An RNA of 177 nucleotides, treated with DMS and 2A3 and read out base by base.
The reactions ran in a buffer of 150 mM KOAc, 10 mM MgCl2 and 150 mM bicine (pH 8.5), at 24 C.
2A3 adducts were read by reverse transcription with SuperScript II with manganese.
RNA sequence: GGGAACGACUCGAGUAGAGUCGAAAAGCAGAUGUUCGUUGAUGAUCUGAAGCGGCGGCUUUUGCGUCAUCGCCUCGUCGAGAUCGGCGUCCAGGCCGUUGCGCUCGCCGUCGACGAUGCGUUGGGCCUAACAUCGGAGUUUCGACUCCGAUGUUAGAAAAGAAACAACAACAACAAC
Reactivity to DMS in 0.01 (KOAc 150mM, MgCl2 10mM, bicine 150mM(pH8.5), 24C), signal-to-noise 4, nucleotides 027 to 126: g010c040a090g000a060u000g010u000u000c050g020u000u000g000a050u000g010a090u010c090u000g020a100a160g020c020g000g010c050g000g000c030u000u000u010u010g010c040g030u000c030a030u000c030g000c010c040u000c110g020u010c030g000a080g000a100u000c040g020g010c010g010u020c160c140a110g020g020c010c100g010u000u000g030c080g010c030u000c040g020c060c010g010u010c010g000a020c010g010a030u000g020c020g020u000u000g020g000g000c060
Reactivity to 2A3 in 0.01 (KOAc 150mM, MgCl2 10mM, bicine 150mM(pH8.5), 24C), signal-to-noise 3, nucleotides 027 to 126: g010c020a010g030a110u060g040u130u090c050g020u050u080g030a120u040g020a050u080c060u200g030a090a000g000c010g060g010c020g020g000c030u060u050u090u090g020c010g080u080c020a010u030c000g000c010c020u060c020g100u040c030g010a060g050a180u180c060g000g000c000g060u040c070c030a050g030g000c040c020g120u130u160g030c060g000c020u050c000g030c000c020g040u030c010g010a020c000g000a010u040g000c010g020u020u040g050g040g000c020